RNA sequence: GGGAACGACUCGAGUAGAGUCGAAAAGCCGAUGAAUUGCCGAGAAGCCUGGCUCGAAAUCGUCGACGCAUCGACGACGGUCCUGCCAUGAGACCGUAACGAGGACAUGUCGCCUCGAACGGCGUCGUAUAACAUGAGUGGUUCGCCACUCAUGUAACUUGUCUGACUAGUUCGCUAGUCAGACAAGAAAAGAAACAACAACAACAAC
Reactivity to DMS in 0.01 (KOAc 150mM, MgCl2 10mM, bicine 150mM(pH8.5), 24C), signal-to-noise 2, nucleotides 027 to 156: g040c020c010g000a150u000g010a090a100u000u000g040c010c010g000a180g000a150a090g020c030c030u000g020g000c020u040c000g040a030a060a040u000c030g030u000c000g010a010c100g010c100a170u010c000g010a060c030g000a050c000g020g020u000c010c010u000g000c050c160a130u000g000a110g010a050c010c030g030u010a050a090c020g010a060g040g020a060c080a140u010g030u000c060g000c030c020u000c010g000a120a060c060g020g010c020g000u000c030g010u000a080u010a090a070c010a000u000g000a030g020u010g000g030u000u000c300g050c040c000a010c020u000c000a000u000g000u000a000a080
Reactivity to 2A3 in 0.01 (KOAc 150mM, MgCl2 10mM, bicine 150mM(pH8.5), 24C), signal-to-noise 5, nucleotides 027 to 156: g050c010c030g010a050u120g040a070a180u120u120g040c040c030g030a030g030a160a010g050c020c060u090g050g000c030u010c060g040a050a070a060u030c030g010u020c000g020a020c050g000c150a140u080c030g030a020c010g010a010c000g000g010u010c000c010u080g130c050c020a100u140g030a050g010a130c000c010g000u020a040a010c030g010a000g010g020a010c050a140u190g040u130c090g000c010c010u020c020g000a040a010c010g010g020c000g000u030c010g010u050a090u050a210a010c000a000u010g000a000g010u010g000g030u010u080c170g030c070c000a000c000u000c010a000u000g000u000a000a000